[RMDB]
RNA sequence: GGGAACGACUCGAGUAGAGUCGAAAAGAAGAGAAUAAAUAGAGGAGUCAGGGUUCGCACACGCUCCGCGAACCCACGGUAACACUGACUGUGGAGCGGAAAAGGCAGAUACAGUACUGCCAAAGAACCGUGGUAUAGGUUUCGACCUAUACCACGGAAAAGAAACAACAACAACAAC
Reactivity to 2A3 in 0.01 (KOAc 150mM, MgCl2 10mM, bicine 150mM(pH8.5), 24C), signal-to-noise 4, nucleotides 027 to 126: g060a050a020g090a000g070a070a050u150a100a100a030u170a060g090a050g100g030a020g000u000c050a060g020g000g000u000u000c000g000c010a030c020a020c130g030c000u010c000c000g000c000g000a000a000c000c010c020a000c020g050g010u040a070a000c060a030c140u080g120a040c020u050g100u160g130g000a000g000c010g020g000a050a100a000a000g000g000c020a010g000a020u110a220c060a020g080u110a070c020u000g010c010c000a030a000a000g020a050a010
Reactivity to DMS in 0.01 (KOAc 150mM, MgCl2 10mM, bicine 150mM(pH8.5), 24C), signal-to-noise 2, nucleotides 027 to 126: g030a080a000g030a120g000a120a050u080a040a060a140u000a060g000a090g020g000a030g020u000c020a040g030g000g000u000u000c000g020c010a100c070a140c000g010c040u000c000c020g000c040g000a040a000c000c000c000a020c140g000g020u000a070a150c120a110c220u030g000a120c010u000g080u000g000g000a050g020c000g000g000a120a070a210a030g000g020c000a000g000a140u050a120c200a050g000u000a140c010u000g000c020c000a010a070a040g010a050a160
Structure probing data (2A3 and DMS) for a 177-nucleotide construct.
It was measured as part of the RMDB library OK1LIB.
For DMS the reverse transcriptase was MarathonRT.
The reactions ran in a buffer of 150 mM KOAc, 10 mM MgCl2 and 150 mM bicine (pH 8.5), at 24 C.
For 2A3 the reverse transcriptase was SuperScript II with manganese.